[RMDB]
RNA sequence: GGGAACGACUCGAGUAGAGUCGAAAAGUGCAAGAGCAGAUACUUAAGUCGAAGAGCAUCUUUCUAUCUUCUCUUCCAAUCUAUUGAUCUGCCCUUCCAAUACUAUCAGAUCAAUAGAUUGGAAGAGAUGGACCGGGCGAUUCGUCGCCCGGUCCAUAAAAGAAACAACAACAACAAC
Reactivity to 2A3 in 0.01 (KOAc 150mM, MgCl2 10mM, bicine 150mM(pH8.5), 24C), signal-to-noise 1, nucleotides 027 to 126: g140u070g050c060a080a010g010a040g040c040a030g020a180u040a170c060u150u150a190a070g080u060c020g140a080a040g010a050g000c020a090u070c000u030u100u010c010u000a140u000c060u080u000c020u030c000u000u000c000c000a000a000u010c000u000a000u000u000g000a000u000c010u000g050c040c100c000u250u010c000c040a190a000u150a100c030u110a040u260c000a010g000a000u000c000a000a000u000a000g000a020u000u000g000g000a000a000g000a000g000